[RMDB]
RNA sequence: GGGAACGACUCGAGUAGAGUCGAAAACACACUGCUAAUGCAAUCCCCGAGUAUCCGGAGGGUAUAGUGCCGUGAGCACGGGUAGUGACGCUAAGCAGCUUGAGCUUAUCCGGGAGUCGCUGUACAGUACGCUGGACGUAUUCGUACGUCCAGCGUAAAAAGAAACAACAACAACAAC
Reactivity to 2A3 in 0.01 (KOAc 150mM, MgCl2 10mM, bicine 150mM(pH8.5), 24C), signal-to-noise 1, nucleotides 027 to 126: c020a010c010a010c020u020g000c030u090a230a020u210g030c000a040a130u050c000c020c020c010g040a050g030u060a300u090c030c000g000g010a040g080g030g100u130a090u140a100g100u090g000c000c000g210u260g080a060g070c030a000c000g030g010g020u060a090g010u070g040a050c060g000c030u030a020a020g010c000a000g030c000u040u120g010a030g000c010u090u070a040u050c030c000g020g060g040a040g060u010c000g040c040u000g040u100a030c010a020g000
Reactivity to DMS in 0.01 (KOAc 150mM, MgCl2 10mM, bicine 150mM(pH8.5), 24C), signal-to-noise 2, nucleotides 027 to 126: c140a080c080a090c020u000g020c030u000a050a100u020g000c020a130a230u000c100c000c000c030g020a090g040u000a110u000c040c000g000g030a120g040g010g020u030a040u000a130g020u020g030c030c010g000u010g000a100g000c070a010c030g020g020g000u010a050g010u000g000a230c160g000c020u000a290a090g010c000a040g000c100u000u000g010a060g040c080u010u000a030u000c040c000g000g000g000a040g020u010c020g050c010u000g010u010a090c120a130g000